[RMDB]
RNA sequence: GGGAACGACUCGAGUAGAGUCGAAAACCAAUGGGAAACCAUUGGCAACUCGGAAACGAGUUGAACCGGGAAUUAGCGUCAAAACCGGCGACAAUGCGAUUUUAAGCAUUGUCGAUUACGCCCAUGUCGAUUUUAAGACAUGGAGCGAAUGACGCAAGGAACUAUGUCCGUUCGCGGACGUGGUUCCAAAAGAAACAACAACAACAAC
Reactivity to DMS in 0.01 (KOAc 150mM, MgCl2 10mM, bicine 150mM(pH8.5), 24C), signal-to-noise 3, nucleotides 027 to 156: c000c000a010a030u010g000g020g020a230a100a170c000c000a000u010u000g010g000c000a020a010c000u000c000g010g010a140a090a200c020g010a060g040u000u000g010a050a110c000c010g000g010g010a150a140u000u000a090g020c010g000u000c020a080a030a160a230c030c020g000g020c000g020a020c000a010a020u000g010c000g000a210u010u000u000u020a100a300g000c000a010u000u000g000u000c000g000a070u000u000a090c030g020c000c000c000a000u000g020u000c000g020a290u000u000u010u010a130a230g000a020c030a020u000g000g000a040g030c010g000a050a100u000g010a020c000g010c000a140a300
Reactivity to 2A3 in 0.01 (KOAc 150mM, MgCl2 10mM, bicine 150mM(pH8.5), 24C), signal-to-noise 6, nucleotides 027 to 156: c000c000a000a000u000g000g000g010a050a020a010c000c000a000u000u000g000g000c000a000a000c000u000c000g010g020a050a050a040c000g000a010g000u000u000g000a050a030c000c000g000g000g010a070a120u120u080a080g000c000g000u000c000a000a000a060a080c000c000g000g000c000g000a000c000a000a000u000g010c020g130a180u030u060u090u300a120a010g000c000a000u000u000g000u000c000g000a000u000u010a060c000g000c000c000c000a000u000g000u000c020g060a120u030u060u070u300a120a020g000a000c000a000u000g000g010a020g000c000g010a010a030u050g000a000c000g000c000a000a010
An RNA of 207 nucleotides, treated with DMS and 2A3 and read out base by base.